[RMDB]
RNA sequence: GGGAACGACUCGAGUAGAGUCGAAAAAACACUGAUCUAGUUUUACUUCGUGGAUAUCUUGGAGACUUCAUGGGUCUUAGCUUUAUCGUUGAUUCUCACUUUGAGGCUGACAACGCUUUGAUCCUUGAAAAGAAAGUCAUUGGUGACAUCGCUGACGUCCACAGUGGAUGUUCGCAUCCACUGUGGAAAAAGAAACAACAACAACAAC
Reactivity to 2A3 in 0.01 (KOAc 150mM, MgCl2 10mM, bicine 150mM(pH8.5), 24C), signal-to-noise 2, nucleotides 027 to 156: a000a000c070a010c030u130g010a120u020c020u060a050g020u000u000u060u160a070c040u050u060c050g050u040g010g010a020u010a030u130c030u020u090g090g020a050g040a090c000u000u000c020a030u020g000g000g000u000c000u000u010a000g010c010u070u080u090a090u190c090g030u050u060g030a120u260u040c010u000c000a110c100u140u120u270g000a010g000g090c050u050g010a030c010a060a000c040g000c010u000u000u010g000a000u000c020c000u000u010g010a010a000a040a040g080a040a000a000g040u020c030a050u030u050g010g000u020g000a020c000a050u050c080g000c110u030g050a060c050g080